[RMDB]
RNA sequence: GGGAACGACUCGAGUAGAGUCGAAAACAACGCGAAGAACCUUACCAAGGCUUGACAUACACCGGAAACGUCUGGAGACAGGCGCCCCCUUGUGGUCGGUGUACAGGUGGUGCAUGGCUGUCGUCAGAUCAGCUUCAGGUUUCGACCUGAAGCUGAUAAAAGAAACAACAACAACAAC
Reactivity to DMS in 0.01 (KOAc 150mM, MgCl2 10mM, bicine 150mM(pH8.5), 24C), signal-to-noise 2, nucleotides 027 to 126: c070a050a110c120g000c020g010a120a080g030a100a130c040c030u000u000a140c050c070a070a070g010g000c060u000u000g000a130c130a150u010a010c000a040c030c020g060g010a110a100a210c020g000u000c000u000g000g000a250g010a100c050a040g040g000c010g000c040c020c000c020c130u000u000g020u010g040g020u000c030g010g030u000g010u000a050c100a060g000g000u000g010g000u000g020c060a090u010g000g010c040u010g000u000c060g010u010c050a120g020